The record gives the reactivity of an RNA of 177 nucleotides to 2A3 and DMS.
RNA sequence: GGGAACGACUCGAGUAGAGUCGAAAAUAGCUUAGUAAUCCUCCUCGACGGAAUCUGAUCAUAGAUUUUGUCAAGGGGAGUCUACGCUUAGCUCACACGAGACGAUAGCGUAGACUAUCCGUCUCGAGAUAGUUUUCUGAUUCGUCGGGAAGCUAUCAAAAGAAACAACAACAACAAC
Reactivity to 2A3 in 0.01 (KOAc 150mM, MgCl2 10mM, bicine 150mM(pH8.5), 24C), signal-to-noise 9, nucleotides 027 to 126: u090a010g020c020u080u040a020g030u100a120a100u070c000c010u020c000c000u010c030g000a000c010g010g010a000a000u000c000u030g160a120u190c050a100u240a180g010a010u000u000u000u020g020u010c030a050a070g000g000g000g000a000g010u000c010u020a010c030g000c000u010u010a010g010c000u010c020a090c020a020c090g030a010g100a040c040g030a050u080a030g010c080g110u060a040g030a040c000u000a010u020c040c050g040u010c010u010c020g040a050
Reactivity to DMS in 0.01 (KOAc 150mM, MgCl2 10mM, bicine 150mM(pH8.5), 24C), signal-to-noise 9, nucleotides 027 to 126: u030a030g000c050u010u000a040g000u010a090a080u010c020c000u020c000c000u000c070g010a010c000g000g000a000a000u000c010u000g010a180u060c260a150u050a020g000a010u000u000u000u000g010u000c000a040a040g000g000g000g000a020g000u010c010u000a010c060g000c010u000u010a220g010c010u000c020a140c190a180c110g000a010g010a030c030g000a040u020a010g000c020g020u020a060g000a080c010u000a010u000c050c070g010u000c010u010c010g010a270
DMS (dimethyl sulfate) methylates the pairing face of unpaired adenines and cytosines. Reactivities are rounded to 0.1 and cut off at 0 and 3. 2A3 adducts were read by reverse transcription with SuperScript II with manganese. For DMS the reverse transcriptase was MarathonRT. It was measured as part of the RMDB library OK1LIB.